[RMDB]
RNA sequence: GGGAACGACUCGAGUAGAGUCGAAAAACCACACGAACUCAAGCGGCGCGGUGUGCUUCGCCAGAGUCAGCUUGCCGCCGCGCAGGCGGAAAGCGCUGCGCGUGUAGUGCGCCGACUGGCGGCCGUUAUGCGCCAUAAUAUUCGUAUUAUGGCGCAUAAAAGAAACAACAACAACAAC
Reactivity to 2A3 in 0.01 (KOAc 150mM, MgCl2 10mM, bicine 150mM(pH8.5), 24C), signal-to-noise 3, nucleotides 027 to 126: a000c020c010a050c010a020c060g160a200a040c040u070c130a080a040g030c020g020g000c040g020c010g060g010u050g000u050g030c020u050u060c000g020c020c000a010g000a010g070u040c010a010g030c010u040u070g060c010c010g020c000c010g030c030g050c030a010g010g000c000g000g040a070a010a010g050c050g010c000u020g000c030g000c010g030u130g050u090a050g010u030g020c020g000c020c000g040a030c020u030g040g040c000g020g020c000c000g000u020u010
Reactivity to DMS in 0.01 (KOAc 150mM, MgCl2 10mM, bicine 150mM(pH8.5), 24C), signal-to-noise 3, nucleotides 027 to 126: a160c010c010a110c230a050c180g000a060a060c080u010c090a090a140g000c000g020g000c000g010c030g000g010u010g000u030g010c020u000u010c000g010c000c010a040g000a080g020u050c180a110g000c010u000u010g020c000c000g020c010c000g000c270g000c150a100g000g000c000g000g000a040a020a000g000c030g030c000u000g010c190g020c040g030u060g000u000a040g010u000g020c040g000c000c010g000a120c050u030g020g000c070g030g000c060c010g000u010u020